[RMDB]
RNA sequence: GGGAACGACUCGAGUAGAGUCGAAAAGAUAUGGAUGCGAUAAGUACUGAAUGAACGAAGAACUCGGAAACGAGGGAGUUCGCGUACUUUUGACGCAUCCUAAGUCAAACCUUCGUUCGCGAAGGAACAAAUCUGUACUGUUCGCAGUACAGAUUUGAAAAGAAACAACAACAACAAC
Reactivity to 2A3 in 0.01 (KOAc 150mM, MgCl2 10mM, bicine 150mM(pH8.5), 24C), signal-to-noise 5, nucleotides 027 to 126: g020a000u080a020u160g010g000a000u010g000c010g030a020u020a090a000g010u020a010c070u110g180a200a300u300g000a030a000c020g110a300a100g010a050a020c000u000c010g020g050a070a070a040c010g000a000g010g000g010a030g020u010u020c010g010c000g030u010a010c000u060u070u040u160g210a060c030g000c000a000u000c000c000u000a050a010g030u010c030a110a030a170c010c000u000u000c000g030u030u060c300g010c010g140a010a000g000g010a010a030
Reactivity to DMS in 0.01 (KOAc 150mM, MgCl2 10mM, bicine 150mM(pH8.5), 24C), signal-to-noise 6, nucleotides 027 to 126: g000a030u000a300u000g010g010a010u000g020c000g010a140u000a020a010g010u000a000c000u010g040a060a090u010g000a010a010c000g000a130a130g010a130a250c000u000c000g000g000a090a090a200c000g000a000g000g000g000a070g010u000u000c000g020c040g000u000a010c000u000u000u000u010g010a190c090g010c010a010u010c000c000u000a000a080g010u000c060a080a120a160c020c000u000u000c010g020u000u010c270g030c020g000a020a020g000g010a070a140